[RMDB]
RNA sequence: GGGAACGACUCGAGUAGAGUCGAAAAAUGUAGAGGUUGCGAUGAAUUUUGGAUUGUUCUCUCAAGUUAGCAGGCAGGUCACUUUUCUCUUUUACGAAGGACUUCGAGUGCACUGGGGUCAGCAUAGCUGAAUGUUUCAGUUCGCUGAAACAUUCAGAAAAGAAACAACAACAACAAC
Reactivity to 2A3 in 0.01 (KOAc 150mM, MgCl2 10mM, bicine 150mM(pH8.5), 24C), signal-to-noise 1, nucleotides 027 to 126: a010u060g020u030a010g000a000g060g000u070u040g010c050g020a060u100g060a080a190u070u110u100u070g090g050a030u060u030g020u060u030c040u000c020u020c020a040a000g020u010u020a030g030c020a050g030g010c000a020g000g040u020c010a020c060u060u070u130u010c020u050c000u050u160u050u040a080c140g050a070a010g000g000a010c000u040u020c070g050a020g110u080g000c030a000c100u020g000g010g020g000u020c000a000g090c020a050u040a040g050
Reactivity to DMS in 0.01 (KOAc 150mM, MgCl2 10mM, bicine 150mM(pH8.5), 24C), signal-to-noise 2, nucleotides 027 to 126: a040u000g010u010a080g020a110g010g020u000u000g000c030g020a080u000g000a070a100u000u000u000u000g020g010a100u000u000g020u000u000c030u000c040u000c100a080a110g010u000u010a070g020c030a070g010g010c080a030g000g010u010c030a060c050u020u010u010u010c080u000c050u000u000u000u000a080c130g000a040a050g010g000a060c090u010u000c130g010a090g010u000g010c050a070c040u000g000g000g000g000u000c050a060g010c100a080u010a100g010